[RMDB]
Structure probing data (2A3 and DMS) for a 177-nucleotide construct. Source: RMDB library OK2TRN, as collected in RNAgym. DMS adducts were read by reverse transcription with MarathonRT. DMS (dimethyl sulfate) methylates the pairing face of unpaired adenines and cytosines. The 2A3 profile rests on 1,474 reads. Reactivities are given for positions 27 through 126.

RNA sequence: GGGAACGACUCGAGUAGAGUCGAAAACACCGGCCGUGGGGCACGUCUCUGCCGUGGGGCCGCCCCGUCCUGGCCGUUGGCAGGUCCCGUCCCCACGGCGCAGGAGGAGGACGGGGGUCCGGGGGCAUAUGUAACCUCGAUUCGUCGAGGUUACAUAAAAAGAAACAACAACAACAAC
Reactivity to 2A3 in 0.01 (KOAc 150mM, MgCl2 10mM, bicine 150mM(pH8.5), 24C), signal-to-noise 1, nucleotides 027 to 126: c030a020c010c030g040g030c010c000g030u020g020g000g010g020c160a010c060g110u040c060u000c010u130g010c000c030g110u170g190g130g080g030c030c010g040c010c020c000c010g040u040c010c030u100g020g000c020c010g070u090u050g020g010c040a020g050g030u070c080c050c020g050u130c000c030c000c000a000c000g000g000c020g000c000a020g000g070a060g050g030a030g000g020a030c060g040g000g000g010g000u010c090c000g000g000g000g030g020c050a070
Reactivity to DMS in 0.01 (KOAc 150mM, MgCl2 10mM, bicine 150mM(pH8.5), 24C), signal-to-noise 2, nucleotides 027 to 126: c060a190c090c030g020g000c010c030g040u010g010g020g010g020c150a050c130g010u010c080u020c030u000g020c010c010g010u010g010g020g000g000c030c050g010c020c000c010c020g000u000c030c030u010g020g000c010c020g010u000u000g010g020c050a010g010g010u000c130c120c050g010u000c000c000c000c000a020c000g010g000c010g010c080a030g010g000a140g000g010a110g010g010a060c050g020g000g000g020g000u000c050c020g000g010g000g000g010c300a170